RNA sequence: GGGAACGACUCGAGUAGAGUCGAAAAUCAGUUUACACAAUUCCUGCUUUGAACCAAUUCAGUUUGAUUCCAAAUGACAUAUCUUAGUUCAAAAGAUGUAAAGCCUUUUAGCAUGGGGAGGGGAACCCUGUCAAGCGGUAUUCGUACCGCUUGACAGAAAAGAAACAACAACAACAAC
Reactivity to DMS in 0.01 (KOAc 150mM, MgCl2 10mM, bicine 150mM(pH8.5), 24C), signal-to-noise 2, nucleotides 027 to 126: u020c040a100g000u000u010u000a030c030a070c090a080a190u000u010c020c010u010g000c070u000u000u000g000a030a030c020c040a060a090u010u000c160a050g000u030u000u000g010a240u010u010c080c100a020a060a120u010g000a070c170a060u000a070u000c100u000u000a060g000u000u010c100a040a060a010a080g010a080u000g010u010a010a050a080g000c030c020u020u000u020u000a080g040c050a070u010g000g000g000g000a100g000g000g010g000a080a100c110c070
Reactivity to 2A3 in 0.01 (KOAc 150mM, MgCl2 10mM, bicine 150mM(pH8.5), 24C), signal-to-noise 1, nucleotides 027 to 126: u030c000a000g090u000u030u110a010c050a030c090a060a090u040u040c000c000u030g030c050u030u010u060g000a010a000c040c010a070a120u090u080c020a030g140u030u060u110g080a060u140u080c030c000a000a040a140u050g080a060c020a030u190a030u080c000u090u110a060g010u150u050c010a110a000a000a090g020a040u060g000u090a000a030a020g070c020c040u110u150u010u090a010g010c000a020u100g000g020g020g020a020g060g000g010g010a010a030c020c020